[RMDB]
RNA sequence: GGGAACGACUCGAGUAGAGUCGAAAAAACAGAAGCCACGACUGGAGCUCCUUGGCUACCCGGGGCCUUCCAAGCAGCAUCAUGAGAAACCUGACGCGCUGUUGGCGGGCCGUGGUGGAGAAGCAGGUGUACCGGUAGUUUUCGAACUACCGGUACAAAAAGAAACAACAACAACAAC
Reactivity to DMS in 0.01 (KOAc 150mM, MgCl2 10mM, bicine 150mM(pH8.5), 24C), signal-to-noise 1, nucleotides 027 to 126: a070a020c040a110g020a300a120g010c000c030a050c090g000a140c050u010g030g020a150g000c020u000c030c030u000u020g000g000c060u000a090c050c010c070g020g020g010g030c040c030u000u030c000c020a030a060g000c010a050g060c030a120u000c060a020u020g020a150g010a170a100a180c170c100u000g000a040c150g000c150g020c000u000g000u020u000g020g020c030g000g000g000c020c020g000u000g000g010u000g010g020a100g000a070a100g030c040a050g000g030

Conditions: 150 mM KOAc, 10 mM MgCl2 and 150 mM bicine (pH 8.5), 24 C. The record gives the reactivity of an RNA of 177 nucleotides to DMS.